[RMDB]
RNA sequence: GGGAACGACUCGAGUAGAGUCGAAAAGGUCUGAAAGUACGGCAGUCGGGUGAAGCUCAGACAGAACGUGGCACCCGCGAUGGUCAGACCCGAGCCCAGCACGACAUGGGCGGUGCCGCCGAACAUGCACUGGGUUCGGUUUCGACCGAACCCAGUGAAAAGAAACAACAACAACAAC
Reactivity to DMS in 0.01 (KOAc 150mM, MgCl2 10mM, bicine 150mM(pH8.5), 24C), signal-to-noise 2, nucleotides 027 to 126: g000g000u000c000u000g000a050a050a210g010u020a110c040g030g030c070a150g020u030c000g010g010g020u040g000a060a080g030c000u000c040a110g030a110c290a130g000a020a040c070g010u000g010g000c000a030c000c000c000g010c100g010a150u000g040g010u000c010a040g000a000c090c000c030g020a150g000c010c000c000a090g000c120a100c170g020a160c040a030u010g000g000g040c010g000g010u010g030c080c090g020c040c010g000a070a050c050a040u000g030
Reactivity to 2A3 in 0.01 (KOAc 150mM, MgCl2 10mM, bicine 150mM(pH8.5), 24C), signal-to-noise 1, nucleotides 027 to 126: g030g000u000c020u010g000a020a020a030g100u140a050c060g070g030c070a040g040u220c020g020g060g010u020g060a050a000g000c000u040c080a040g090a180c090a100g030a090a020c100g030u040g060g010c010a000c010c010c040g000c030g000a100u180g000g080u070c020a000g000a020c000c000c040g040a010g040c000c000c010a010g020c060a040c190g130a000c030a020u010g010g020g040c000g000g040u090g070c060c070g000c030c010g010a020a010c020a030u060g020
This 177-nucleotide RNA was probed chemically with DMS and 2A3. Source: RMDB library OK2TRN, as collected in RNAgym. For 2A3, 1,219 sequencing reads were counted. The RNA was probed in 150 mM KOAc, 10 mM MgCl2 and 150 mM bicine (pH 8.5) at 24 C. For DMS, 1,392 sequencing reads were counted. For DMS the reverse transcriptase was MarathonRT.